[RMDB]
Structure probing data (DMS and 2A3) for a 207-nucleotide construct. For 2A3, 1,461 sequencing reads were counted. For 2A3 the reverse transcriptase was SuperScript II with manganese.

RNA sequence: GGGAACGACUCGAGUAGAGUCGAAAAGUCCUUCCUCGCGCCCGCAGGACCACCCCUCGCCCCCUUUGCGCUGUCGCUUCGGCUACUACCCGGUGGAAACAACUGAAGCUCCCGAGAACCGCUUUUUCUCUAUCUUACUUGCUUCGGGGCGAGGGUGCAACAAUAUCCACUUCGGUGGAUAUUGUUGAAAAGAAACAACAACAACAAC
Reactivity to DMS in 0.01 (KOAc 150mM, MgCl2 10mM, bicine 150mM(pH8.5), 24C), signal-to-noise 2, nucleotides 027 to 156: g000u010c000c020u000u010c010c020u000c020g020c080g020c080c020c060g040c110a120g040g030a040c000c030a110c080c010c000c010u010c010g020c000c000c000c010c050u000u010u000g000c050g030c050u000g020u000c050g020c050u000u000c060g030g020c020u000a090c060u010a160c010c020c040g000g010u010g030g000a170a180a150c070a080a120c050u000g010a060a090g040c020u010c040c030c020g000a100g010a100a070c070c080g000c050u000u030u020u010u010c020u000c030u000a150u030c090u000u000a100c040u010u010g010c030u000u000c040g030g010g040g020c020g000a010g010g010g010u000g020
Reactivity to 2A3 in 0.01 (KOAc 150mM, MgCl2 10mM, bicine 150mM(pH8.5), 24C), signal-to-noise 2, nucleotides 027 to 156: g040u040c000c000u020u030c000c000u020c000g080c000g040c000c080c020g060c110a030g000g040a010c000c040a030c000c020c000c020u000c020g020c060c010c020c030c020u020u020u090g040c030g000c060u060g030u130c010g000c030u010u020c040g010g000c010u050a050c020u040a030c050c000c000g030g030u070g000g080a050a120a070c030a030a030c050u030g030a030a010g010c000u030c030c020c010g030a040g030a050a040c030c010g050c140u120u140u010u110u030c040u000c020u030a120u030c010u020u040a160c040u060u090g050c030u040u110c050g000g000g000g000c000g000a010g000g000g000u000g000